The record gives the reactivity of an RNA of 207 nucleotides to DMS. The reactions ran in a buffer of 150 mM KOAc, 10 mM MgCl2 and 150 mM bicine (pH 8.5), at 24 C.
[RMDB]
RNA sequence: GGGAACGACUCGAGUAGAGUCGAAAAUCUGGGAGUGCAGAGUGUGAAGCGCCGCCGCUGCUAUUAAAAGACACUGUAGCGCUUAACUUGCUUGUCUGUGUGUAUAUGUAUGUCCGCCGACCAGAAGGAGGAGGAAGAGGCGCGUCGCCGAGUUGCAAAAGAGGUGAAAUUUCGAUUUCACCUCUUUAAAAGAAACAACAACAACAAC
Reactivity to DMS in 0.01 (KOAc 150mM, MgCl2 10mM, bicine 150mM(pH8.5), 24C), signal-to-noise 1, nucleotides 027 to 156: u000c050u000g000g000g010a100g040u000g050c000a100g020a150g040u040g000u000g000a060a090g010c040g030c000c030g020c040c040g040c020u060g060c030u020a140u000u020a050a100a080a170g000a110c010a100c060u010g040u000a060g000c060g040c040u000u000a050a060c060u000u000g020c070u000u020g000u010c030u020g020u010g040u000g010u010a060u000a140u020g010u000a110u010g000u020c010c000g020c070c000g010a120c020c090a140g000a080a120g010g020a120g010g010a070g000g000a120a090g020a060g020g030c000g020c030g000u010c060g000c020c000g030a220g010u010u000g010c010a050